[RMDB]
RNA sequence: GGGAACGACUCGAGUAGAGUCGAAAAGGAACAUCCUUCGGGAUGUUCCAUACGCGGCGCCUCUCGCUAAGCGGCGCGCAGAGGCGCGCAGCGCAGCUUGAAAGUAAGCCUAGUUCGCUAGGCUUAAUUGGACAAUUCGAUUCGUCGAAUUGUCCAAAAAAGAAACAACAACAACAAC
Reactivity to DMS in 0.01 (KOAc 150mM, MgCl2 10mM, bicine 150mM(pH8.5), 24C), signal-to-noise 1, nucleotides 027 to 126: g000g020a010a020c000a010u000c010c000u000u030c170g010g000g010a000u020g000u010u010c000c000a030u010a020c060g000c020g000g030c000g010c020c000u000c000u020c060g040c020u000a080a080g000c170g010g000c300g050c060g030c130a020g010a000g020g000c010g010c000g020c000a020g020c000g050c140a070g000c110u000u010g000a060a040a170g000u010a020a010g000c000c000u010a020g000u000u000c160g010c000u000a000g000g010c000u000u000a000a090